[RMDB]
RNA sequence: GGGAACGACUCGAGUAGAGUCGAAAAAGUUGCACCACCAGGAUCCGCUUGCGCGCCUCGCCCAGGCGUUCGCGGUGACGCAGCAACUCGUCGAUCCAGCCGGCCACCUUCAGCCCGAAGGUGGUCAGGAGUAGUCCGUAUUCGUACGGACUACUCCAAAAGAAACAACAACAACAAC
Reactivity to 2A3 in 0.01 (KOAc 150mM, MgCl2 10mM, bicine 150mM(pH8.5), 24C), signal-to-noise 1, nucleotides 027 to 126: a010g020u020u030g030c000a030c040c010a040c020c020a060g090g030a040u060c050c000g020c050u050u090g030c000g010c010g020c050c040u090c070g030c020c050c010a010g030g020c000g020u050u080c080g020c040g040g000u010g010a010c050g050c060a110g000c000a000a020c010u020c010g060u040c040g050a050u030c030c040a010g130c110c090g020g000c000c010a010c010c000u010u010c010a070g110c050c030c020g000a000a000g000g010u000g010g040u000c010a000
Reactivity to DMS in 0.01 (KOAc 150mM, MgCl2 10mM, bicine 150mM(pH8.5), 24C), signal-to-noise 2, nucleotides 027 to 126: a040g010u010u010g040c000a100c070c070a060c050c020a120g020g010a020u000c150c040g000c010u000u010g040c300g010c020g010c100c040u030c070g000c040c030c010a100g000g000c020g020u010u010c050g010c060g000g000u010g020a170c090g020c140a100g010c020a040a040c010u010c090g010u000c090g000a060u010c030c030a140g020c130c090g020g010c000c000a000c000c030u000u000c000a210g000c100c160c130g010a020a000g010g010u000g010g010u000c000a020

Chemical mapping of a 177-nucleotide RNA with 2A3 and DMS.
It was measured as part of the RMDB library OK2TST.
The RNA was probed in 150 mM KOAc, 10 mM MgCl2 and 150 mM bicine (pH 8.5) at 24 C.